[RMDB]
RNA sequence: GGGAACGACUCGAGUAGAGUCGAAAACUGCAUCACCUGAUCACUGAUGGCUCAACGGUAUCCGGCGGUACAACUGAAUACUUGUAGCUGCCUUUUGAGCGGGUUGGCUGCAAUCCGAAACUGAGAGAAAACCUAAUUACGUUCGCGUAAUUAGGAACGAUAUUUAUCGCUUCGGCGAUAAAUAUCGAAAAGAAACAACAACAACAAC
Reactivity to DMS in 0.01 (KOAc 150mM, MgCl2 10mM, bicine 150mM(pH8.5), 24C), signal-to-noise 1, nucleotides 027 to 156: c080u000g010c020a090u010c010a060c020c020u020g040a070u000c010a090c080u020g000a030u040g010g040c030u000c010a090a050c010g000g000u000a030u010c020c010g000g000c000g010g050u010a150c230a120a030c020u010g000a060a070u000a000c050u000u000g000u000a080g020c000u010g010c030c000u000u010u010u010g010a110g020c050g010g010g000u000u000g060g000c080u000g010c000a050a090u000c000c000g030a210a090a100c020u000g010a120g010a220g020a180a060a060a130c000c000u000a010a010u000u000a000c000g030u000u020c250g020c030g050u000a000a010u000u000a010g000g060a000a020
Reactivity to 2A3 in 0.01 (KOAc 150mM, MgCl2 10mM, bicine 150mM(pH8.5), 24C), signal-to-noise 2, nucleotides 027 to 156: c020u030g010c010a020u020c010a010c010c020u030g030a040u040c020a010c050u050g020a020u070g070g030c020u020c050a060a040c050g010g030u040a050u040c030c020g040g000c030g060g070u140a090c060a110a030c090u100g050a090a070u110a140c040u020u060g010u040a010g030c010u000g000c000c000u040u060u060u110g050a050g010c060g000g010g000u190u250g040g000c040u030g010c020a020a040u020c030c010g050a090a110a090c060u130g020a040g010a000g020a140a060a030a040c010c000u000a000a000u000u000a000c010g000u020u050c180g000c010g090u000a000a000u000u000a000g000g000a000a000

Chemical mapping of a 207-nucleotide RNA with DMS and 2A3. DMS (dimethyl sulfate) methylates the pairing face of unpaired adenines and cytosines. It was measured as part of the RMDB library M2RFPK. The reactions ran in a buffer of 150 mM KOAc, 10 mM MgCl2 and 150 mM bicine (pH 8.5), at 24 C. 2A3 adducts were read by reverse transcription with SuperScript II with manganese.